RNA sequence: GGGAACGACUCGAGUAGAGUCGAAAAAGAAUAGCCAACUUCAAUUUCAGGCCCUCUAGUGAUCUCAGAAGCAUUCAGAUCUCUUAGAAUGUUUUCCUAGUUUUGCCUUACUAGCCAAAAUAAAAACGUAUGGCUAUACUUUCGAGUAUAGCCAUACAAAAGAAACAACAACAACAAC
Reactivity to DMS in 0.01 (KOAc 150mM, MgCl2 10mM, bicine 150mM(pH8.5), 24C), signal-to-noise 2, nucleotides 027 to 126: a050g040a040a080u000a130g030c060c050a070a100c260u030u000c100a050a050u010u030u040c040a110g000g030c030c040c020u000c070u020a030g010u030g000a030u010c040u030c070a100g000a040a140g010c040a020u000u000c070a050g000a060u000c060u010c060u010u100a090g010a030a060u000g020u000u000u000u000c000c050u000a010g010u020u000u060u000g020c100c030u010u000a090c060u000a060g000c060c080a110a010a060a060u030a010a070a020a100a090c170
Reactivity to 2A3 in 0.01 (KOAc 150mM, MgCl2 10mM, bicine 150mM(pH8.5), 24C), signal-to-noise 6, nucleotides 027 to 126: a000g090a030a050u090a060g050c020c010a060a050c040u080u060c050a070a230u060u090u060c030a020g040g020c000c000c000u010c000u020a050g020u020g110a090u010c030u010c060a030g020a090a000g030c020a010u030u010c010a010g090a290u030c050u000c020u110u080a040g010a050a030u030g020u010u110u040u020c010c010u010a030g020u030u030u040u060g040c000c010u040u090a050c040u020a010g030c030c020a020a040a060a120u180a050a080a070a020a000c060